[RMDB]
RNA sequence: GGGAACGACUCGAGUAGAGUCGAAAAAUGAAUGGCUCGGCCGCCGUAAUGACGCAGUGAUAUUGAAGAUUUUUUUUCUAACGGGUGUUGGUACCGGUACGAUGGGGCAACAAUGGGAGGGGGCAGCCUUUAAUGCGUAGUUCGCUACGCAUUAAAGAAAAGAAACAACAACAACAAC
Reactivity to DMS in 0.01 (KOAc 150mM, MgCl2 10mM, bicine 150mM(pH8.5), 24C), signal-to-noise 3, nucleotides 027 to 126: a060u010g010a090a080u000g000g010c030u000c060g010g020c040c040g020c050c020g000u010a060a060u000g010a090c080g010c040a070g000u000g010a100u000a110u000u000g000a050a060g010a000u000u000u000u010u010u000u000u000c010u010a090a090c130g020g000g010u010g010u000u010g010g000u000a050c070c030g000g000u010a070c140g010a090u010g010g000g000g010c060a040a020c080a040a060u000g000g000g030a090g010g000g010g010g020c070a060g000c120
Reactivity to 2A3 in 0.01 (KOAc 150mM, MgCl2 10mM, bicine 150mM(pH8.5), 24C), signal-to-noise 2, nucleotides 027 to 126: a000u170g070a030a010u100g000g000c040u010c040g040g020c040c000g070c030c010g000u030a050a110u090g040a000c040g000c100a020g030u020g140a080u050a080u190u140g020a060a040g010a120u110u010u030u010u030u050u110u100c060u060a040a060c010g080g060g000u100g060u150u040g060g020u030a070c000c020g030g030u010a000c030g020a060u070g010g010g000g020c020a050a020c030a080a030u130g010g010g000a090g040g010g000g020g050c040a020g000c020
The data come from the RNA Mapping Database (RMDB), library OK2TRN. The record gives the reactivity of an RNA of 177 nucleotides to DMS and 2A3. The RNA was probed in 150 mM KOAc, 10 mM MgCl2 and 150 mM bicine (pH 8.5) at 24 C. DMS adducts were read by reverse transcription with MarathonRT. The DMS profile rests on 4,002 reads.